Conditions: 150 mM KOAc, 10 mM MgCl2 and 150 mM bicine (pH 8.5), 24 C.
Chemical mapping of a 177-nucleotide RNA with DMS.
It was measured as part of the RMDB library OK2TRN.
Values are in units of 0.01, from 0 to 300, in steps of 10.
The DMS profile rests on 759 reads.

[RMDB]
RNA sequence: GGGAACGACUCGAGUAGAGUCGAAAAGUGAGGGCGCCUCAGGUCAGCCCCCACAAGCACAGGGGGAGAUAUGAGCAGGGUCUGCCCAGAGCAGUGGGCAGGGAGGCUCAAAUGCCAGCCUGGGCACCCCAAGUCGACUAUUCGUAGUCGACUUGGGAAAAGAAACAACAACAACAAC
Reactivity to DMS in 0.01 (KOAc 150mM, MgCl2 10mM, bicine 150mM(pH8.5), 24C), signal-to-noise 1, nucleotides 027 to 126: g000u020g000a060g020g000g020c100g000c050c040u020c250a050g010g000u000c100a200g020c000c000c070c010c020a070c090a100a170g000c120a020c140a120g000g010g010g000g000a130g030a060u010a170u010g000a020g000c000a130g000g010g010u000c000u010g020c000c020c010a020g000a130g020c120a110g030u000g000g000g000c050a040g000g000g010a230g010g000c000u000c020a000a060a050u020g000c020c040a180g000c000c000u010g000g000g040c000a110c080